[RMDB]
RNA sequence: GGGAACGACUCGAGUAGAGUCGAAAACGGACACUAUGGGGCAAGGGCUUUCUUGCUUUGCGUGAACACUUGGCAUUUUGCUGACAACUGGAAACGUGGUCCAGGCCAGGGGUCGGCAAACACCUCCCUGAAGGGCCCCAUGGUAAGUGUGCUGGGAAGUAUAAUUUAGUUUCGACUAAAUUAUACUAAAAGAAACAACAACAACAAC
Reactivity to DMS in 0.01 (KOAc 150mM, MgCl2 10mM, bicine 150mM(pH8.5), 24C), signal-to-noise 2, nucleotides 027 to 156: c040g000g010a170c060a050c010u000a030u000g020g020g040g040c010a110a090g000g020g050c300u000u010u000c070u000u020g020c050u000u000u010g020c020g010u000g000a100a110c060a050c050u000u000g010g020c010a150u000u000u010u000g030c060u000g010a050c020a040a060c020u010g020g010a060a060a160c070g030u020g010g000u010c010c030a130g010g010c000c010a030g020g010g000g040u010c000g020g050c020a020a040a050c140a090c040c010u000c010c020c010u000g000a120a120g030g010g000c000c000c030c000a010u010g000g020u010a050a100g000u010g010u000g000c010u010g010g020g010a110
Reactivity to 2A3 in 0.01 (KOAc 150mM, MgCl2 10mM, bicine 150mM(pH8.5), 24C), signal-to-noise 1, nucleotides 027 to 156: c040g040g020a010c010a000c040u030a010u020g010g010g000g000c010a040a020g010g000g020c030u110u200u110c040u070u110g030c000u040u040u070g040c050g080u150g080a100a000c050a020c080u050u030g000g010c010a060u020u050u020u100g040c060u030g030a010c010a010a000c020u020g030g030a090a140a030c090g060u100g040g040u040c040c050a030g010g060c000c000a000g000g010g000g010u020c000g020g010c000a000a020a000c040a030c000c030u030c000c010c000u020g060a090a080g090g030g000c000c000c000c000a000u010g010g000u020a050a020g030u030g010u030g110c040u040g040g020g050a030
Structure probing data (DMS and 2A3) for a 207-nucleotide construct. The RNA was probed in 150 mM KOAc, 10 mM MgCl2 and 150 mM bicine (pH 8.5) at 24 C. Values are in units of 0.01, from 0 to 300, in steps of 10. DMS adducts were read by reverse transcription with MarathonRT.